[RMDB]
This 177-nucleotide RNA was probed chemically with 2A3 and DMS. 2A3 adducts were read by reverse transcription with SuperScript II with manganese. High DMS reactivity at an A or C suggests that its Watson-Crick edge is free. For DMS the reverse transcriptase was MarathonRT. The reactions ran in a buffer of 150 mM KOAc, 10 mM MgCl2 and 150 mM bicine (pH 8.5), at 24 C.
RNA sequence: GGGAACGACUCGAGUAGAGUCGAAAAAUGUGGUCCUUCGGGACCACAUGGACUACUCCCACCUAAUAGAGUAGGGAGGAAGGUGGAAAAUAUAAAUAAAAAUGACCCCCCCUUUCGAGGGGGGGAAUAUGAAUACACUGUUCGCAGUGUAUUCAUAAAAAGAAACAACAACAACAAC
Reactivity to 2A3 in 0.01 (KOAc 150mM, MgCl2 10mM, bicine 150mM(pH8.5), 24C), signal-to-noise 1, nucleotides 027 to 126: a000u000g000u000g060g000u030c020c020u000u020c290g030g000g010a000c060c000a000c000a000u000g010g030a000c020u020a010c010u050c020c000c020a010c030c000u160a190a140u190a150g130a040g090u110a180g040g000g000a000g060g080a040a010g040g020u130g040g060a150a040a200a040u190a070u160a220a120a090u210a070a070a020a040a060u160g020a070c000c000c020c010c020c000c000u000u050u050c230g070a010g000g010g010g080g000g000g000a000a000
Reactivity to DMS in 0.01 (KOAc 150mM, MgCl2 10mM, bicine 150mM(pH8.5), 24C), signal-to-noise 2, nucleotides 027 to 126: a010u010g010u000g000g020u000c010c010u010u010c160g020g030g010a020c000c000a010c010a000u000g000g000a030c050u000a040c040u000c010c010c010a020c040c040u000a160a090u010a120g000a100g000u000a080g020g020g020a060g010g000a080a020g000g000u000g000g000a120a030a070a050u000a120u000a100a040a130u000a040a020a070a110a120u010g000a200c000c000c000c000c010c000c000u000u000u010c120g000a000g020g010g020g040g000g000g020a000a010